[RMDB]
An RNA of 177 nucleotides, treated with DMS and 2A3 and read out base by base. 2A3 adducts were read by reverse transcription with SuperScript II with manganese. Conditions: 150 mM KOAc, 10 mM MgCl2 and 150 mM bicine (pH 8.5), 24 C. The DMS profile rests on 2,319 reads. The 2A3 profile rests on 1,558 reads.
RNA sequence: GGGAACGACUCGAGUAGAGUCGAAAAGGUGCCCUAUUCGGACACUGCAGUUCCCAUAGAAAGGCUAAGGACCUCGCAAUGAGGUAAGGUGGGACUUUUCCUUCUGGAACCAAGCGGUUGGUUCCGACGAAAUACGGAAGUUCGCUUCCGUAUUUCGAAAAGAAACAACAACAACAAC
Reactivity to DMS in 0.01 (KOAc 150mM, MgCl2 10mM, bicine 150mM(pH8.5), 24C), signal-to-noise 3, nucleotides 027 to 126: g000g000u000g010c000c000c020u010a170u010u010c120g030g000a010c000a010c010u010g010c200a130g010u010u010c000c000c000a100u020a090g020a050a070a060g000g010c100u000a110a110g020g030a070c020c000u000c010g010c220a190a100u010g010a010g010g020u000a030a050g000g020u000g000g000g010a090c050u000u000u000u000c000c020u000u000c120u020g010g010a020a010c010c000a030a050g000c260g020g000u000u000g000g000u000u000c000c000g000a100
Reactivity to 2A3 in 0.01 (KOAc 150mM, MgCl2 10mM, bicine 150mM(pH8.5), 24C), signal-to-noise 2, nucleotides 027 to 126: g050g010u020g000c000c000c010u110a250u130u300c120g000g010a010c010a010c010u020g000c000a020g010u040u040c000c010c030a000u000a020g020a020a090a000g060g000c070u080a040a050g060g020a050c000c000u000c040g020c080a190a300u300g000a020g010g040u050a050a050g050g020u040g000g020g030a010c000u000u070u030u020c000c010u130u000c150u100g010g000a000a000c000c000a040a010g130c110g270g100u040u060g000g000u020u000c000c000g010a010